[RMDB]
RNA sequence: GGGAACGACUCGAGUAGAGUCGAAAAACGCUGCUGCAUAUAUGAAACUCUCGGAUGCACUUAAACGACAGAUUCGCAUUGCAUGCCGUAAGUGUAAUUUAGCUUUCCGGUUAACCACCUCAAAGCUUGCGGCCCCCGUUCGCGGGGGCCAAAAGAAACAACAACAACAAC
Reactivity to DMS in 0.01 (KOAc 150mM, MgCl2 10mM, bicine 150mM(pH8.5), 24C), signal-to-noise 2, nucleotides 027 to 129: a130c300g000c110u040g010c020u000g010c020a000u060a110u000a050u010g040a110a140a090c000u000c160u000c020g010g030a040u010g060c070a010c190u050u010a050a040a200c050g010a030c130a050g000a120u030u020c070g010c070a070u020u000g000c020a000u060g050c080c040g060u030a090a020g060u000g020u010a280a210u000u000u220a050g030c030u000u020u000c090c140g070g030u000u010a210a020c030c060a060c000c020u040c200a000a000a000g000c030u070u000g000c040
Reactivity to 2A3 in 0.01 (KOAc 150mM, MgCl2 10mM, bicine 150mM(pH8.5), 24C), signal-to-noise 2, nucleotides 027 to 129: a020c050g020c000u040g000c000u000g000c000a020u050a000u000a020u120g000a100a040a000c000u100c000u000c090g000g000a020u020g000c020a000c000u070u300a170a120a000c020g090a000c040a070g110a140u170u130c050g000c050a000u000u070g010c010a010u120g210c020c050g000u020a050a000g020u000g060u020a060a110u010u010u030a030g040c000u050u000u000c000c000g050g000u000u150a020a020c160c000a030c000c000u010c030a000a000a000g010c000u010u010g040c000